[RMDB]
The record gives the reactivity of an RNA of 207 nucleotides to 2A3 and DMS.
Conditions: 150 mM KOAc, 10 mM MgCl2 and 150 mM bicine (pH 8.5), 24 C.
It was measured as part of the RMDB library M2RFPK.
As a SHAPE reagent, 2A3 marks flexible, mostly unpaired nucleotides at the ribose 2'-OH.

RNA sequence: GGGAACGACUCGAGUAGAGUCGAAAAAAGGAAUUAGCGUGCCUUCAGGCUAAGGGUUUGAUAUCUGCUAAAACCCGGUGCAUUCAUCAAUGCAGGUUAAGCCAAAGGGAUGUCCCGACCGGAGGCCAAAAGUUCGCUACGUUCGCGUAGCGAACAACGUACAAAACAGCUUCGGCUGUUUUGUACGAAAAGAAACAACAACAACAAC
Reactivity to 2A3 in 0.01 (KOAc 150mM, MgCl2 10mM, bicine 150mM(pH8.5), 24C), signal-to-noise 2, nucleotides 027 to 156: a000a000g110g030a130a070u170u060a210g070c040g080u080g060c040c000u110u130c090a090g030g030c020u010a000a100g010g000g020u020u020u040g020a040u020a040u050c020u050g010c000u040a010a010a010a070c000c010c020g030g000u070g000c000a110u050u130c020a060u070c060a120a160u140g000c000a000g030g060u060u150a040a000g000c020c020a000a000a030g050g000g010a010u050g030u000c000c000c000g030a000c000c000g010g000a010g000g010c000c000a010a100a000a000g020u010u000c000g000c000u000a000c000g000u000u040c120g000c010g120u000a000g000c000g000a000a000c000a000a000
Reactivity to DMS in 0.01 (KOAc 150mM, MgCl2 10mM, bicine 150mM(pH8.5), 24C), signal-to-noise 2, nucleotides 027 to 156: a100a080g000g010a050a090u010u010a070g030c060g070u010g020c010c030u000u000c020a110g010g030c010u000a100a170g020g000g010u010u000u000g000a210u020a050u000c010u000g000c060u010a110a030a020a100c010c000c000g020g060u010g020c020a040u010u010c060a090u000c060a130a190u000g010c010a060g020g020u000u010a140a080g010c010c010a050a250a210g000g000g010a090u000g010u000c010c010c000g000a080c010c010g000g010a300g030g010c030c020a000a040a070a080g040u000u000c020g000c030u000a010c000g040u000u000c300g020c070g040u000a000g030c000g000a000a000c000a020a030

For DMS, 3,101 sequencing reads were counted.